[RMDB]
Chemical mapping of a 177-nucleotide RNA with DMS and 2A3. DMS adducts were read by reverse transcription with MarathonRT. Reactivities are given for positions 27 through 126. The DMS profile rests on 7,490 reads. Conditions: 150 mM KOAc, 10 mM MgCl2 and 150 mM bicine (pH 8.5), 24 C. 2A3 adducts were read by reverse transcription with SuperScript II with manganese. Source: RMDB library TTRDEL, as collected in RNAgym. High DMS reactivity at an A or C suggests that its Watson-Crick edge is free.
RNA sequence: GGGAACGACUCGAGUAGAGUCGAAAAGAUAUGGAUUCAGGACAUGCCUAAUCGUCGGAAACGACGAUAGGCAACAGCCUGGUCCUAAGUCAAAAGUGACGGAAACGGUUCGCCGUUUCCGUCACAACAAUCUAUACCUGUUCGCAGGUAUAGAUUGAAAAGAAACAACAACAACAAC
Reactivity to DMS in 0.01 (KOAc 150mM, MgCl2 10mM, bicine 150mM(pH8.5), 24C), signal-to-noise 5, nucleotides 027 to 126: g000a030u010a300u000g000g010a010u000u010c000a010g000g010a030c060a190u000g010c000c000u000a050a100u000c000g020u010c000g010g000a080a090a180c000g000a010c010g010a010u000a000g000g000c000a010a020c250a130g000c000c000u000g000g010u000c000c000u000a050a120g000u010c030a070a070a090a100g000u000g000a010c000g000g000a010a010a010c020g010g000u000u010c250g020c000c000g010u000u000u000c000c000g010u000c000a000c000a010a180
Reactivity to 2A3 in 0.01 (KOAc 150mM, MgCl2 10mM, bicine 150mM(pH8.5), 24C), signal-to-noise 4, nucleotides 027 to 126: g020a020u060a050u130g000g010a030u300u300c010a000g000g000a050c070a150u090g000c000c010u150a290a300u020c000g000u000c010g030g020a060a060a050c000g000a000c010g000a000u000a000g000g010c010a000a010c000a010g030c000c000u010g000g000u000c000c000u000a140a030g040u020c020a000a020a010a180g020u010g000a010c000g000g000a000a000a010c000g020g070u120u250c300g050c100c000g000u000u000u000c000c000g000u000c000a000c000a000a010